[RMDB]
RNA sequence: GGGAACGACUCGAGUAGAGUCGAAAAGAUCUAUACCUGAGCAGGUUGAAGUUUAGCGAAAGCUAGAUGGAGGACCGAACCAGUUCUGAUGUGCAAAUCGUUUGGAUGACUUGGGUAUAGGGGUUAACUAUACAAUGUGUUUCGACACAUUGUAUAGAAAAGAAACAACAACAACAAC
Reactivity to 2A3 in 0.01 (KOAc 150mM, MgCl2 10mM, bicine 150mM(pH8.5), 24C), signal-to-noise 9, nucleotides 027 to 126: g060a040u040c000u000a000u000a010c000c000u000g010a000g000c050a040g010g010u040u040g020a020a010g000u000u010u010a000g000c020g050a130a030a010g000c000u000a010g000a020u030g010g030a050g110g110a000c000c010g010a030a050c010c000a060g040u100u020c130u230g030a030u020g080u130g150c110a090a100a060u030c010g020u020u040u020g060g010a070u090g060a160c000u000u010g010g000g000u000a000u000a010g010g010g010g000u050u110a070a040
Reactivity to DMS in 0.01 (KOAc 150mM, MgCl2 10mM, bicine 150mM(pH8.5), 24C), signal-to-noise 9, nucleotides 027 to 126: g000a120u020c000u000a010u010a000c000c000u000g010a020g030c070a240g000g010u000u000g000a300a190g000u000u000u000a000g010c000g000a120a100a180g010c000u000a010g000a010u000g000g000a300g010g000a000c010c000g010a170a240c040c040a040g010u010u000c030u040g020a010u000g010u020g010c290a080a120a040u000c010g010u000u010u000g000g000a170u010g000a110c010u000u000g000g000g000u000a010u000a010g000g000g000g010u010u010a060a150
Overview: The data come from the RNA Mapping Database (RMDB), libraries RFM100 and RFMREP. Chemical mapping of a 177-nucleotide RNA with 2A3 and DMS. For DMS the reverse transcriptase was MarathonRT.